This 177-nucleotide RNA was probed chemically with DMS and 2A3. Reactivities are given for positions 27 through 126. It was measured as part of the RMDB library OK1LIB. DMS adducts were read by reverse transcription with MarathonRT.
[RMDB]
RNA sequence: GGGAACGACUCGAGUAGAGUCGAAAAUUGUCGGGGAUUUAGUCGCCGACGGCUACCUCGGGAUCGACGGCGACGGCUUCGGCACCGUGACGGCCGCAGACGGUUCCCGACGCCGUGCCUUUGCCACGGAUACCCUCAUUUUCGAAUGAGGGUAUCCAAAAGAAACAACAACAACAAC
Reactivity to DMS in 0.01 (KOAc 150mM, MgCl2 10mM, bicine 150mM(pH8.5), 24C), signal-to-noise 2, nucleotides 027 to 126: u000u070g020u030c000g000g000g000g000a100u000u000u000a130g030u010c010g030c070c020g010a050c000g020g020c100u000a110c050c070u000c070g000g000g000a140u000c050g000a160c090g020g010c000g000a060c020g020g000c040u000u000c010g000g050c300a030c020c040g020u000g010a080c080g050g010c010c000g000c050a150g000a050c080g000g020u000u000c030c010c010g010a050c030g000c070c000g040u000g000c030c050u010u010u000g000c030c050a080c170
Reactivity to 2A3 in 0.01 (KOAc 150mM, MgCl2 10mM, bicine 150mM(pH8.5), 24C), signal-to-noise 6, nucleotides 027 to 126: u130u100g020u010c000g000g010g010g020a010u070u080u210a120g040u010c020g040c130c030g030a100c000g010g000c010u090a100c010c020u040c030g060g020g010a160u050c010g040a040c020g010g000c030g050a070c030g030g000c000u030u030c010g000g000c010a010c000c020g070u080g060a080c140g030g010c010c010g000c030a040g030a060c020g000g010u030u070c020c000c000g000a020c020g000c000c020g010u050g000c010c010u090u070u130g060c040c020a080c080